[RMDB]
The data come from the RNA Mapping Database (RMDB), library VIROID. Chemical mapping of a 177-nucleotide RNA with DMS and 2A3.
RNA sequence: GGGAACGACUCGAGUAGAGUCGAAAAGUUAGGGGGUACCACGGUUUCGGACUUUUGUCCUCGUCAGAGUCACCACACAGUGACUGACCGUGGAGAAUAGUUCCACCUCUCGCCGCCACCCUGCGCACACGAAUAAUUGGUUCGCCAAUUAUUCGUGAAAAGAAACAACAACAACAAC
Reactivity to DMS in 0.01 (KOAc 150mM, MgCl2 10mM, bicine 150mM(pH8.5), 24C), signal-to-noise 3, nucleotides 027 to 126: g010u000u000a040g000g000g010g020g030u010a130c030c030a030c020g010g000u000u010u010c220g000g000a020c010u000u010u000u010g000u000c000c000u010c120g000u000c210a100g010a040g000u010c000a010c010c080a120c300a130c290a090g000u000g010a010c010u000g020a030c010c010g010u000g020g000a060g000a070a120u000a070g010u000u000c010c020a060c050c040u000c040u000c080g000c070c020g010c040c030a080c030c000c030u000g010c090g020c170a240
Reactivity to 2A3 in 0.01 (KOAc 150mM, MgCl2 10mM, bicine 150mM(pH8.5), 24C), signal-to-noise 2, nucleotides 027 to 126: g090u120u120a060g000g000g010g000g000u020a050c000c020a020c010g030g000u020u070u070c030g010g000a020c010u110u150u190u300g050u000c000c030u010c020g090u060c040a000g000a000g080u000c010a000c010c010a120c010a020c030a080g020u000g020a020c000u000g010a000c020c040g000u000g000g000a010g010a010a020u070a030g080u090u000c010c020a040c010c000u000c000u010c030g010c010c000g000c020c010a050c000c000c010u040g050c080g000c000a050
Conditions: 150 mM KOAc, 10 mM MgCl2 and 150 mM bicine (pH 8.5), 24 C. 2A3 adducts were read by reverse transcription with SuperScript II with manganese. Values cover nucleotides 27 to 126.